[RMDB]
RNA sequence: GGGAACGACUCGAGUAGAGUCGAAAAAAGUGAUUAUUCGUAAUCACUUCACGCCGGGCCCGGUGGCGCGUGCCUGUAGUCCCAGCUACUCGGGAGGCUAAACGACGUACCCGUUCGCGGGUACGAACUUAGAAUUGAGAUUCGUCUCAAUUCUAAGAAAAGAAACAACAACAACAAC
Reactivity to DMS in 0.01 (KOAc 150mM, MgCl2 10mM, bicine 150mM(pH8.5), 24C), signal-to-noise 7, nucleotides 027 to 126: a020a010g010u000g010a010u000u000a010u000u010c170g010u000a010a000u000c000a000c000u000u000c080a090c190g010c010c020g010g010g010c000c050c000g000g010u000g010g000c000g000c020g010u000g000c020c010u000g010u000a060g000u000c000c010c010a050g010c010u010a120c040u010c070g010g000g010a070g000g010c020u010a030a060a090c160g010a190c010g010u000a010c000c000c000g020u000u000c180g010c010g010g000g010u000a000c000g000a030a080
Reactivity to 2A3 in 0.01 (KOAc 150mM, MgCl2 10mM, bicine 150mM(pH8.5), 24C), signal-to-noise 5, nucleotides 027 to 126: a000a000g010u010g000a010u010u020a030u040u100c180g040u060a010a000u010c000a000c000u050u030c090a080c070g000c000c000g000g020g000c030c020c000g000g000u010g000g000c010g000c010g010u010g000c000c010u040g020u090a040g010u010c000c000c010a000g000c030u250a200c020u060c080g010g000g000a000g020g000c050u090a090a070a050c090g130a010c020g020u000a000c000c020c010g000u030u040c290g010c000g040g000g000u010a000c000g000a000a000

An RNA of 177 nucleotides, treated with DMS and 2A3 and read out base by base. The reactions ran in a buffer of 150 mM KOAc, 10 mM MgCl2 and 150 mM bicine (pH 8.5), at 24 C. For DMS the reverse transcriptase was MarathonRT. Source: RMDB library M2PK50, as collected in RNAgym. High 2A3 reactivity points to a flexible backbone, as in loops and unpaired stretches.